Description:
Structure probing data (DMS and 2A3) for a 177-nucleotide construct. For DMS the reverse transcriptase was MarathonRT.
[RMDB]
RNA sequence: GGGAACGACUCGAGUAGAGUCGAAAACAUACGGACUUCGGUCCGUAUGAAAGAACCUCAUAUUGACGCAAACUUCCGCGUCAUCGCGAGGAAGCGAGGAAAAAAUCGAGGUGUUCGCACCUCGAAACUUAAUGAGUCUCUUCGGAGACUCAUUAAGAAAAGAAACAACAACAACAAC
Reactivity to DMS in 0.01 (KOAc 150mM, MgCl2 10mM, bicine 150mM(pH8.5), 24C), signal-to-noise 4, nucleotides 027 to 126: c000a010u000a000c000g000g000a010c000u010u020c220g010g000u000c000c000g010u000a000u000g000a030a070a080g000a120a100c020c000u000c060a100u000a100u020u000g000a030c020g030c010a080a130a140c180u010u010c160c200g010c010g000u000c050a030u000c140g030c070g010a060g010g010a100a080g010c090g010a070g020g020a000a060a110a030a090a070u000c000g010a000g000g020u000g000u010u020c210g020c010a030c000c000u000c000g000a000a000a100
Reactivity to 2A3 in 0.01 (KOAc 150mM, MgCl2 10mM, bicine 150mM(pH8.5), 24C), signal-to-noise 4, nucleotides 027 to 126: c000a000u000a000c010g000g000a010c010u050u040c230g080g000u000c000c000g000u000a000u010g010a000a000a010g050a050a080c030c010u000c010a060u140a110u200u080g010a000c010g000c020a000a140a300c190u280u050c140c100g010c000g050u000c010a030u040c030g020c060g030a060g070g070a050a020g070c040g040a090g060g050a120a100a000a030a010a040u040c010g000a010g010g000u020g030u050u060c210g020c060a000c000c000u000c000g000a000a000a000
About this RNA
Conditions: 150 mM KOAc, 10 mM MgCl2 and 150 mM bicine (pH 8.5), 24 C. It was measured as part of the RMDB library M2PK50.